[RMDB]
RNA sequence: GGGAACGACUCGAGUAGAGUCGAAAAGAUAUGGAUCAUCAUGGAGUCGCUACACUCGGAAACGAGUGGUCGACGAUGAAAUGAUGAGUCCUAAGUCAAAACUCUGUUGCGUUCGCGCAACAGAGAAUCCGGAGAUAACGUUCGCGUUAUCUCCGGAAAAAGAAACAACAACAACAAC
Reactivity to DMS in 0.01 (KOAc 150mM, MgCl2 10mM, bicine 150mM(pH8.5), 24C), signal-to-noise 1, nucleotides 027 to 126: g000a040u000a300u000g000g030a190u000c010a000u000c000a000u020g030g010a300g000u000c000g040c120u000a230c070a020c030u000c010g030g000a090a010a090c000g010a020g030u000g000g010u020c010g020a060c000g000a050u000g000a160a260a010u000g000a010u000g000a000g000u000c000c000u000a090a090g020u000c030a110a060a220a110c000u000c000u000g020u000u000g000c000g040u010u000c300g030c000g010c000a000a010c000a000g000a000g000a040a090

Source information: Chemical mapping of a 177-nucleotide RNA with DMS. Source: RMDB library TTRDEL, as collected in RNAgym. The RNA was probed in 150 mM KOAc, 10 mM MgCl2 and 150 mM bicine (pH 8.5) at 24 C.